[RMDB]
RNA sequence: GGGAACGACUCGAGUAGAGUCGAAAAACGGAUAGAUUCGUCUAUCCGUGCAUCUCAUAAGAGACAGAGAAAGUCUGCUAAGAUCUCACUUAGAUAAAGAGAAGAGAGUCGAGUUCGCUCGACUCAACUUGAACGUCUAAUUCGUUAGACGUUCAAGAAAAGAAACAACAACAACAAC
Reactivity to 2A3 in 0.01 (KOAc 150mM, MgCl2 10mM, bicine 150mM(pH8.5), 24C), signal-to-noise 4, nucleotides 027 to 126: a000c000g000g010a000u010a000g020a010u000u050c150g030u000c080u000a000u000c000c000g010u000g000c010a070u010c010u000c010a050u080a170a060g100a010g030a040c020a010g120a010g130a300a250a030g120u000c000u010g020c030u030a030a020g010a130u030c050u020c040a040c030u030u030a040g050a210u180a200a090a000g060a000g010a090a040g100a020g000a000g030u000c000g000a000g000u020u100c190g020c050u000c000g010a000c010u000c000a000a020
Reactivity to DMS in 0.01 (KOAc 150mM, MgCl2 10mM, bicine 150mM(pH8.5), 24C), signal-to-noise 5, nucleotides 027 to 126: a010c000g010g000a010u010a000g000a020u010u010c190g030u000c000u000a000u000c000c000g010u010g000c180a130u000c020u000c010a140u010a100a110g000a060g020a080c030a040g000a140g000a100a140a100g000u000c010u000g010c050u000a030a020g000a050u000c020u010c090a060c020u010u000a020g000a100u000a030a040a060g010a050g000a090a170g000a150g010a010g010u000c000g000a020g010u000u010c230g010c010u000c000g000a010c010u000c000a020a070
Chemical mapping of a 177-nucleotide RNA with 2A3 and DMS.
Values cover nucleotides 27 to 126.
For DMS the reverse transcriptase was MarathonRT.
For DMS, 5,355 sequencing reads were counted.
The reactions ran in a buffer of 150 mM KOAc, 10 mM MgCl2 and 150 mM bicine (pH 8.5), at 24 C.
2A3 adducts were read by reverse transcription with SuperScript II with manganese.